[RMDB]
RNA sequence: GGGAACGACUCGAGUAGAGUCGAAAAGAAUAUCUUGAGAGAAAGCUGUAAGCGACUAUACACAGGUAAGUUUGGAGUGUGGAAUGGGUCACUCAAGUCGGAACUGAGACCUAUGGAGAAAGUUAUGGCCAAGGAAGAUAUUCGUAUCUUCCUUGGCAAAAGAAACAACAACAACAAC
Reactivity to 2A3 in 0.01 (KOAc 150mM, MgCl2 10mM, bicine 150mM(pH8.5), 24C), signal-to-noise 3, nucleotides 027 to 126: g030a100a000u100a040u210c050u100u080g030a040g000a000g000a070a030a000g000c020u030g050u180a080a040g110c130g010a040c010u070a060u050a120c030a000c020a050g000g070u120a060a090g060u010u120u120g130g000a040g010u080g000u130g000g070a060a060u110g060g050g080u030c030a040c030u060c000a010a000g050u060c040g060g060a000a180c040u060g000a030g060a070c000c020u020a030u040g020g010a040g080a120a080a000g030u180u150a120u140g020
Reactivity to DMS in 0.01 (KOAc 150mM, MgCl2 10mM, bicine 150mM(pH8.5), 24C), signal-to-noise 3, nucleotides 027 to 126: g000a090a070u020a040u030c010u000u010g000a080g010a110g010a060a130a080g000c000u000g010u020a110a050g020c070g000a050c040u000a060u020a080c050a100c080a030g010g020u010a030a090g010u000u010u010g030g000a090g010u000g030u000g020g000a080a060u010g000g010g000u000c040a090c050u010c030a040a060g020u000c070g000g000a070a080c060u020g000a060g010a030c010c040u030a050u020g000g000a080g000a050a080a080g000u000u000a070u030g010
Annotation:
The record gives the reactivity of an RNA of 177 nucleotides to 2A3 and DMS. The DMS profile rests on 5,941 reads. It was measured as part of the RMDB library OK1LIB.